[RMDB]
RNA sequence: GGGAACGACUCGAGUAGAGUCGAAAACGCUGAUUAUGUGUCAGUGACUGAUGACGAAGCUCUGGAUGCGUUUAAAGCGCUGUCAUGCAAAGAAGGGAUCAUUCCGGCGUUGGAGUCUUCCCAUGCCGCUUCAUCAAGUAUUCGUACUUGAUGAAGCAAAAGAAACAACAACAACAAC
Reactivity to DMS in 0.01 (KOAc 150mM, MgCl2 10mM, bicine 150mM(pH8.5), 24C), signal-to-noise 5, nucleotides 027 to 126: c040g000c020u000g000a080u010u010a080u020g010u010g020u000c000a010g010u000g000a140c080u000g010a190u010g000a020c030g010a300a270g000c030u010c060u010g000g000a060u010g010c020g000u000u000u010a070a120a140g000c010g000c020u010g010u000c030a050u000g000c100a050a080a110g000a110a130g020g010g010a100u000c150a190u000u000c050c010g010g010c090g010u010u000g010g010a030g010u000c030u000u000c010c000c000a080u010g010c180c150
Reactivity to 2A3 in 0.01 (KOAc 150mM, MgCl2 10mM, bicine 150mM(pH8.5), 24C), signal-to-noise 8, nucleotides 027 to 126: c010g000c010u010g020a050u030u190a190u300g230u080g010u030c010a010g010u010g060a170c070u060g030a060u170g010a000c020g010a030a020g020c010u020c050u110g130g040a070u100g010c010g020u020u020u170a150a130a000g000c000g000c020u040g050u100c040a040u080g040c030a050a070a100g080a060a080g130g010g020a070u160c040a090u170u080c030c020g010g020c040g040u040u070g050g000a010g000u010c000u010u000c000c000c000a000u050g050c020c050